[RMDB]
RNA sequence: GGGAACGACUCGAGUAGAGUCGAAAAUGUCUUCUGUGUAUCACUUGUAUGUCUUCAAUCAGGUCUUAUCAAGUGAUGUUAUGUUUGAAGAUGCCCAAGGUUUGAAAAAGUUCUACAAAGAAGUUAGCUGAAGAUACACGUUCGCGUGUAUCUUCAGAAAAGAAACAACAACAACAAC
Reactivity to 2A3 in 0.01 (KOAc 150mM, MgCl2 10mM, bicine 150mM(pH8.5), 24C), signal-to-noise 1, nucleotides 027 to 126: u240g030u020c010u000u000c000u020g060u040g040u070a000u020c010a010c040u030u010g050u030a010u010g020u020c010u090u120c100a090a300u120c030a070g020g050u000c000u010u120a100u120c000a000a060g000u010g000a000u000g000u050u040a040u010g180u000u190u130g000a000a000g000a000u000g030c000c000c000a000a030g110g000u120u110u170g100a070a050a000a000a010g020u040u000c030u020a080c040a050a170a080g030a080a040g050u040u150a030g000
Reactivity to DMS in 0.01 (KOAc 150mM, MgCl2 10mM, bicine 150mM(pH8.5), 24C), signal-to-noise 1, nucleotides 027 to 126: u010g010u000c000u000u000c010u000g010u000g040u000a020u000c000a020c000u000u000g010u000a080u000g010u000c010u000u010c080a110a140u000c300a020g010g010u000c020u010u020a080u010c030a000a020g000u020g000a020u000g010u000u020a060u010g000u010u020u020g000a030a010g000a020u000g020c060c010c020a090a080g010g000u000u020u020g010a110a070a110a110a050g000u000u000c030u000a150c150a110a080a030g020a030a040g000u010u010a100g010